[RMDB]
RNA sequence: GGGAACGACUCGAGUAGAGUCGAAAAGAUAGACCAAGGCCAUGCGAUACCAAGGGCCAUUGAGAUUGAGGCGCGGCGGUUUUCAUCUCAGGCGAGGGGACCGACGGAUCGUUCGUUACUCCAUGAGGUCUGCAAAUAAGUUCGCUUAUUUGCAGACAAAAGAAACAACAACAACAAC
Reactivity to DMS in 0.01 (KOAc 150mM, MgCl2 10mM, bicine 150mM(pH8.5), 24C), signal-to-noise 2, nucleotides 027 to 126: g000a080u010a060g010a210c080c030a090a150g020g020c010c060a080u000g010c070g010a080u020a100c090c070a090a170g010g000g020c000c030a070u000u000g000a060g020a090u000u000g000a090g020g010c090g020c060g000g030c070g010g000u000u000u020u000c030a070u010c040u010c050a080g020g000c040g010a020g010g000g010g010a060c100c040g000a060c100g000g000a050u000c020g050u000u010c050g020u000u010a110c050u000c020c060a080u040g010a150g000
Reactivity to 2A3 in 0.01 (KOAc 150mM, MgCl2 10mM, bicine 150mM(pH8.5), 24C), signal-to-noise 1, nucleotides 027 to 126: g030a020u100a030g090a040c010c020a030a060g050g000c000c000a020u100g010c040g030a030u040a110c020c030a060a050g090g090g000c010c010a040u050u100g030a060g020a070u050u090g030a040g090g020c040g000c040g060g000c000g030g040u000u000u000u050c050a090u010c010u020c060a090g020g010c060g020a020g000g000g000g010a000c060c080g020a040c010g010g040a090u110c030g030u060u000c000g000u050u040a120c010u030c040c010a040u040g040a030g080
Chemical mapping of a 177-nucleotide RNA with DMS and 2A3. For DMS the reverse transcriptase was MarathonRT. 2A3 adducts were read by reverse transcription with SuperScript II with manganese. The RNA was probed in 150 mM KOAc, 10 mM MgCl2 and 150 mM bicine (pH 8.5) at 24 C. High 2A3 reactivity points to a flexible backbone, as in loops and unpaired stretches.